[RMDB]
RNA sequence: GGGAACGACUCGAGUAGAGUCGAAAAAGAGAAUGAUUAAAUCAAAGAUGCUAGAACCCAAUAUGUUACAGAAGAUUAUGAACCAGUCUCCGGGUGAUUCAACAUAUCUUGAUUGGGCCAACGAUCCGACUAACGAUGAGUUCGCUCAUCGUUAGUCAAAAGAAACAACAACAACAAC
Reactivity to DMS in 0.01 (KOAc 150mM, MgCl2 10mM, bicine 150mM(pH8.5), 24C), signal-to-noise 1, nucleotides 027 to 126: a050g000a170g000a110a030u000g000a120u000u000a070a070a210u000c020a020a030a090g020a090u010g000c110u000a060g010a130a100c010c010c010a100a020u000a040u000g010u000u020a050c230a110g000a040a030g000a050u000u010a080u010g020a070a020c060c080a080g000u010c050u000c090c110g010g010g000u020g010a070u020u000c050a030a050c170a010u000a040u000c040u000u000g010a010u000u010g010g010g030c040c080a030a060c140g010a070u020c110c110
Reactivity to 2A3 in 0.01 (KOAc 150mM, MgCl2 10mM, bicine 150mM(pH8.5), 24C), signal-to-noise 1, nucleotides 027 to 126: a000g170a050g050a120a090u150g060a080u130u190a140a140a050u060c020a000a230a000g080a010u080g040c040u070a010g050a100a110c020c020c020a000a000u120a050u150g090u070u090a030c040a030g060a130a000g080a060u040u080a110u200g000a000a040c030c000a030g070u050c010u000c040c020g100g040g000u040g010a030u090u050c000a040a060c000a030u090a050u020c070u130u030g060a120u060u060g040g020g000c030c010a100a040c050g020a000u000c050c090